[RMDB]
RNA sequence: GGGAACGACUCGAGUAGAGUCGAAAAUGCUGCUCAAAGGAGGGGGCGCAUUGGGAGAAAUCCCAACAGAGAUGGAGACUCAUACUACUAUUCUGAGCCUACAAGUGAAAAUAAUGCCCACCACGUCCAUCACCAAGGGUUUCGACCCUUGGUGAUGAAAAGAAACAACAACAACAAC
Reactivity to DMS in 0.01 (KOAc 150mM, MgCl2 10mM, bicine 150mM(pH8.5), 24C), signal-to-noise 2, nucleotides 027 to 126: u010g010c020u010g020c020u000c020a110a120a100g000g040a090g020g000g000g000g000c050g000c070a030u010u000g000g000g000a020g000a100a190a100u000c000c000c010a020a090c210a140g000a120g000a050u000g010g010a080g000a080c050u000c060a020u000a070c110u000a120c130u000a050u000u010c080u000g000a030g000c030c010u000a020c070a010a140g000u010g000a040a090a070a090u010a060a050u000g020c040c010c020a090c090c110a090c160g020u000c140
Reactivity to 2A3 in 0.01 (KOAc 150mM, MgCl2 10mM, bicine 150mM(pH8.5), 24C), signal-to-noise 1, nucleotides 027 to 126: u030g000c030u060g000c020u020c090a130a150a040g100g040a080g030g060g000g000g000c030g000c030a050u040u020g000g030g010a010g030a000a060a010u010c020c000c000a010a010c050a020g060a020g020a010u070g100g010a040g010a060c020u010c090a060u100a130c000u000a010c000u030a130u160u030c040u020g010a020g000c020c000u070a070c020a050a060g010u090g160a140a000a000a000u220a020a110u100g050c000c040c000a040c000c020a050c050g050u100c000